[RMDB]
RNA sequence: GGGAACGACUCGAGUAGAGUCGAAAAGAGCUGGGCGUCGAGCUGCCCGCGGAGUAACACCUCGGGAUUCACCCUGCUCCCUCCGCUCGACUCGUCCCUCCUCCGGACGGGGGAGGGACGACCGCUCCGGGACCAAUGGGCCUUGGUGCGUAUGGCGCUGAUUUCGAUAGUUCGCUAUCGAAAUCAGAAAAGAAACAACAACAACAAC
Reactivity to 2A3 in 0.01 (KOAc 150mM, MgCl2 10mM, bicine 150mM(pH8.5), 24C), signal-to-noise 2, nucleotides 027 to 156: g010a000g000c020u090g010g020g030c080g090u210c100g040a000g050c210u150g080c080c010c020g020c020g000g000a060g030u170a160a060c040a030c150c020u040c020g000g000g000a030u040u020c020a070c000c010c020u000g040c010u030c020c000c010u010c010c010g000c010u100c020g130a140c030u010c020g020u010c000c000c000u040c010c010u010c010c000g200g060a160c260g140g000g000g000g000a000g000g000g020a000c010g020a000c000c000g000c000u000c020c000g000g010g160a170c000c000a180a220u150g080g050g000c040c020u100u290g070g000u010g010c020g010u070a120u210g000g050c010g000